[RMDB]
RNA sequence: GGGAACGACUCGAGUAGAGUCGAAAAGCAGGAGUUCUGACCACUCUCGUUCACAUUGCUGACCACGAGAGUGGUUCACGUGCCUACCGGGAGGUAGGCAGCAAUGUGAGAUAGUCCGGAACUCCGAACCGACGUUGAUGUUCGCAUCAGCGUCGGUAAAAGAAACAACAACAACAAC
Reactivity to DMS in 0.01 (KOAc 150mM, MgCl2 10mM, bicine 150mM(pH8.5), 24C), signal-to-noise 4, nucleotides 027 to 126: g010c150a170g000g000a030g010u000u000c010u010g000a050c030c050a040c020u000c010u000c020g010u000u000c050a020c020a150u010u010g010c100u000g000a050c250c170a010c010g010a070g010a080g010u000g000g000u000u000c010a030c090g020u010g030c010c000u010a010c000c000g020g020g000a170g000g010u000a010g020g010c010a010g010c100a060a050u000g010u000g000a030g010a170u000a120g020u010c060c010g010g000a010a000c010u010c000c000g000a070
Reactivity to 2A3 in 0.01 (KOAc 150mM, MgCl2 10mM, bicine 150mM(pH8.5), 24C), signal-to-noise 4, nucleotides 027 to 126: g140c130a060g010g000a010g000u020u000c010u020g030a030c020c010a010c020u000c000u010c010g070u080u050c010a040c050a160u100u300g010c090u050g080a030c040c030a000c040g020a020g000a000g030u010g000g000u010u000c000a000c000g020u020g020c000c000u000a000c010c010g020g100g030a070g000g000u000a010g000g000c000a000g000c010a020a080u150g000u010g010a040g010a070u130a080g100u010c050c030g000g000a010a000c000u000c010c000g000a000
Background
This 177-nucleotide RNA was probed chemically with DMS and 2A3. For DMS, 5,809 sequencing reads were counted. Source: RMDB library OK2TRN, as collected in RNAgym. 2A3 is a SHAPE reagent: it acylates the 2'-hydroxyl of flexible nucleotides of all four kinds. For 2A3, 7,267 sequencing reads were counted. The RNA was probed in 150 mM KOAc, 10 mM MgCl2 and 150 mM bicine (pH 8.5) at 24 C. For 2A3 the reverse transcriptase was SuperScript II with manganese.